[RMDB]
RNA sequence: GGGAACGACUCGAGUAGAGUCGAAAAGAUAUGGAAAGCGGAGCUAAUCAAGACCUGCCAGUACUGCCUAUCGGAAACGAUAGGAACUACAGUACUGGCAGACCUUGAUGCCACGCUUUCCUAAGUCCGCUUCUAUAAUGUUCGCAUUAUAGAAGCGAAAAGAAACAACAACAACAAC
Reactivity to 2A3 in 0.01 (KOAc 150mM, MgCl2 10mM, bicine 150mM(pH8.5), 24C), signal-to-noise 2, nucleotides 027 to 126: g010a060u140a070u210g000g000a000a000a000g000c010g030g030a060g040c060u230a280a050u030c000a000a010g020a040c010c000u000g020c000c000a000g000u010a010c010u020g030c020c000u010a010u000c010g020g070a120a090a060c030g000a000u020a000g030g070a020a010c070u300a020c050a000g000u000a020c000u000g060g000c000a000g000a000c000c000u000u010g000a000u020g000c000c010a050c000g030c000u000u000u030c000c000u000a060a020g030u020c020
Reactivity to DMS in 0.01 (KOAc 150mM, MgCl2 10mM, bicine 150mM(pH8.5), 24C), signal-to-noise 3, nucleotides 027 to 126: g000a100u000a300u000g000g010a000a010a020g010c000g020g000a300g030c030u000a100a040u000c000a000a020g010a060c020c010u000g010c020c000a010g000u000a000c000u000g000c010c000u000a000u000c000g000g000a150a120a170c010g020a020u000a000g000g000a030a020c080u020a300c000a000g000u000a000c000u000g000g020c000a000g000a000c020c000u000u000g000a010u000g000c060c250a140c010g000c010u000u000u000c000c010u010a010a110g000u010c080
Overview:
The data come from the RNA Mapping Database (RMDB), library TTRINS. Structure probing data (2A3 and DMS) for a 177-nucleotide construct. The DMS profile rests on 3,591 reads. DMS (dimethyl sulfate) methylates the pairing face of unpaired adenines and cytosines. As a SHAPE reagent, 2A3 marks flexible, mostly unpaired nucleotides at the ribose 2'-OH. Reactivities are given for positions 27 through 126. 2A3 adducts were read by reverse transcription with SuperScript II with manganese.